[RMDB]
RNA sequence: GGGAACGACUCGAGUAGAGUCGAAAAAGUGUAUGGGCUCCGGGGAUAGUACGGACGCAAGUUUGAAACUUGAAGAAAUUGACGGAAGGACACCACAAGGAGUGGAGUGUGCGGGUUAAUUUGACUCCUUGUACCACGCAUUCGUGCGUGGUACAAGAAAAGAAACAACAACAACAAC
Reactivity to DMS in 0.01 (KOAc 150mM, MgCl2 10mM, bicine 150mM(pH8.5), 24C), signal-to-noise 2, nucleotides 027 to 126: a080g000u000g000u020a110u020g030g010g030c030u000c030c030g100g050g000g030a050u050a020g080u000a050c000g000g000a130c110g010c040a040a000g000u000u000u040g000a160a150a100c040u010u010g020a090a020g000a080a100a050u010u020g000a080c080g010g040a070a110g050g000a090c000a150c080c030a000c040a120a100g000g010a210g040u030g000g000a160g000u000g030u000g000c100g020g050g000u000u010a030a090u000u020u020g010a090c080u000c040
Reactivity to 2A3 in 0.01 (KOAc 150mM, MgCl2 10mM, bicine 150mM(pH8.5), 24C), signal-to-noise 1, nucleotides 027 to 126: a000g140u080g000u070a180u050g000g000g010c010u030c010c000g020g000g000g000a040u060a080g030u030a060c060g000g000a000c000g010c050a000a030g000u020u100u200g100a080a050a000c040u030u030g010a030a030g130a130a280a000u200u240g030a050c060g000g030a080a070g120g010a050c090a010c000c000a000c050a130a040g140g100a000g110u100g020g000a090g000u140g030u030g000c040g000g000g000u030u120a160a020u060u000u090g000a010c030u010c000

An RNA of 177 nucleotides, treated with DMS and 2A3 and read out base by base. It was measured as part of the RMDB library RFM100. The RNA was probed in 150 mM KOAc, 10 mM MgCl2 and 150 mM bicine (pH 8.5) at 24 C. DMS adducts were read by reverse transcription with MarathonRT. 2A3 is a SHAPE reagent: it acylates the 2'-hydroxyl of flexible nucleotides of all four kinds.